[RMDB]
RNA sequence: GGGAACGACUCGAGUAGAGUCGAAAAGCGCUGUUCGCAGCGCCCAAAUCCUAAGUCGUGCCGUUUGACGAUCCUUGUCAGCUGAUGUCGGAAACGACAUACAGCUUGGAUUUAGGAUCCGAGGCACGAUAUGGAGGCACUGGUCUUUCGAGACCAAGCUCUGUGCCUAUUUCGAUAGGCACAGAGCAAAAGAAACAACAACAACAAC
Reactivity to 2A3 in 0.01 (KOAc 150mM, MgCl2 10mM, bicine 150mM(pH8.5), 24C), signal-to-noise 3, nucleotides 027 to 156: g010c060g030c020u010g040u070u200c300g000c080a000g000c000g040c030c000c000a050a080a030u040c010c000u040a140a030g020u000c000g000u010g010c000c010g160u200u180u180g140a160c070g000a000u000c010c000u020u000g020u010c000a010g000c000u010g000a000u000g010u000c010g050g030a120a060a060c000g000a000c030a000u160a280c000a020g000c000u010u090g050g000a000u100u000u300a010g000g000a000u040c010c010g010a040g010g000c000a000c000g000a000u020a010u050g050g010a010g030g000c050a040c280u030g000g000u000c000u050u190u100c250g100a030g000a010c000c010a000a000